Chemical mapping of a 177-nucleotide RNA with 2A3 and DMS. It was measured as part of the RMDB library OK1LIB. For 2A3 the reverse transcriptase was SuperScript II with manganese. Conditions: 150 mM KOAc, 10 mM MgCl2 and 150 mM bicine (pH 8.5), 24 C. DMS adducts were read by reverse transcription with MarathonRT. The 2A3 profile rests on 5,908 reads.
RNA sequence: GGGAACGACUCGAGUAGAGUCGAAAAAUGUUUUUGUUCAUUUUGGUAUAGCACAAUCUUCUACCAGAGGUGGCAGUAGAGUUGAAGGGAUUUUUGCUGGAUUGUUUAUGAAUGCCUAUGGUGCAGGAUAACUAUGUCUGUUCGCAGACAUAGUUAUAAAAGAAACAACAACAACAAC
Reactivity to 2A3 in 0.01 (KOAc 150mM, MgCl2 10mM, bicine 150mM(pH8.5), 24C), signal-to-noise 8, nucleotides 027 to 126: a000u100g050u030u040u020u040u030g080u050u090c060a080u030u060u090u060g090g000u100a070u090a120g070c070a020c020a070a070u040c030u090u020c020u080a070c010c010a010g020a020g100g010u060g040g000c020a020g020u060a010g020a040g070u030u100g080a100a070g080g010g040a050u070u060u020u070u100g020c010u020g010g050a090u080u040g090u050u080u050a100u100g120a110a040u070g020c010c010u110a180u150g030g030u080g010c020a010g030g050
Reactivity to DMS in 0.01 (KOAc 150mM, MgCl2 10mM, bicine 150mM(pH8.5), 24C), signal-to-noise 6, nucleotides 027 to 126: a050u020g000u010u000u010u010u010g000u000u000c080a110u010u000u020u010g020g010u010a060u020a080g000c100a070c120a080a080u020c040u000u010c050u000a070c050c040a050g000a090g010g030u000g010g010c080a080g010u010a040g010a080g020u000u010g000a120a070g010g000g000a080u000u010u010u010u000g000c030u000g000g000a090u000u020g000u000u000u000a050u020g020a090a070u010g010c030c010u010a090u020g000g020u020g020c060a050g010g010